[RMDB]
RNA sequence: GGGAACGACUCGAGUAGAGUCGAAAACUAAGCUCAGCGAUUGUCAAACAGAACGUAGAUUAACUGCCGCUAAUCACUCCACAAUGUUGAGCCGACUCUCAACGGCUACUGCAUUACUAUAUGCGCCCGUACAUUAACAUUUCGAUGUUAAUGUACGAAAAGAAACAACAACAACAAC
Reactivity to DMS in 0.01 (KOAc 150mM, MgCl2 10mM, bicine 150mM(pH8.5), 24C), signal-to-noise 9, nucleotides 027 to 126: c080u020a090a120g000c030u000c020a050g020c060g010a070u010u010g020u000c100a050a110a090c140a100g010a060a070c090g010u000a060g010a100u010u010a060a070c060u010g010c050c040g020c050u010a040a050u010c030a050c040u010c030c060a070c080a050a040u010g010u000u000g000a060g010c030c020g010a090c110u000c060u010c090a080a140c070g010g000c020u000a050c100u010g010c020a020u010u000a110c140u010a070u020a040u000g000c030g010c090c070
Reactivity to 2A3 in 0.01 (KOAc 150mM, MgCl2 10mM, bicine 150mM(pH8.5), 24C), signal-to-noise 9, nucleotides 027 to 126: c020u040a050a010g010c010u010c040a010g010c020g150a090u050u070g060u070c070a090a080a090c040a100g080a080a030c060g060u090a040g030a130u060u060a060a050c030u060g030c020c020g000c030u020a030a030u050c010a010c040u020c030c000a030c020a050a060u070g010u030u040g020a010g000c010c000g060a060c020u040c020u020c050a050a080c020g010g000c010u090a100c030u120g000c000a010u030u050a100c070u090a040u030a030u250g020c020g030c010c010
This 177-nucleotide RNA was probed chemically with DMS and 2A3. Source: RMDB libraries RFM100 and RFMREP, as collected in RNAgym. For 2A3 the reverse transcriptase was SuperScript II with manganese. The reactions ran in a buffer of 150 mM KOAc, 10 mM MgCl2 and 150 mM bicine (pH 8.5), at 24 C.